[RMDB]
RNA sequence: GGGAACGACUCGAGUAGAGUCGAAAAUGGACGAAUGAAAGCACUCGUUUCCAUUACAUUAGAUGAAGCUUUCGUAAUUCAUGAUUUACGUGUAAUUGAAGGAAACUCUGGCUUGUUCGUUGCAAUGUCUACAAAACGCUUUCGAGCGUUUUGUAGAAAAAGAAACAACAACAACAAC
Reactivity to 2A3 in 0.01 (KOAc 150mM, MgCl2 10mM, bicine 150mM(pH8.5), 24C), signal-to-noise 8, nucleotides 027 to 126: u100g020g020a000c000g030a010a010u120g160a120a000a020g030c020a090c150u070c060g000u000u010u020c020c000a010u020u020a000c000a010u070u100a070g070a150u030g030a030a010g060c090u160u220u180c140g060u220a160a110u020u030c030a030u030g150a210u110u090u190a040c080g010u010g000u000a010a020u040u140g190a100a050g000g030a010a010a000c030u040c110u150g040g000c000u010u050g000u000u000c000g000u000u000g010c010a020a070u110g040
Reactivity to DMS in 0.01 (KOAc 150mM, MgCl2 10mM, bicine 150mM(pH8.5), 24C), signal-to-noise 5, nucleotides 027 to 126: u010g010g000a010c020g010a000a030u020g010a060a030a000g010c010a120c110u000c130g010u000u000u000c000c000a050u000u010a010c020a020u020u000a100g000a030u010g000a040a060g010c110u000u040u040c250g010u010a080a060u010u000c040a020u020g010a120u030u020u030a080c190g000u000g010u000a010a010u010u040g010a090a070g000g000a010a000a010c000u030c140u020g000g000c000u000u000g010u000u000c000g000u000u010g000c060a060a080u030g000

Chemical mapping of a 177-nucleotide RNA with 2A3 and DMS. It was measured as part of the RMDB library OK1LIB. The RNA was probed in 150 mM KOAc, 10 mM MgCl2 and 150 mM bicine (pH 8.5) at 24 C. Values cover nucleotides 27 to 126.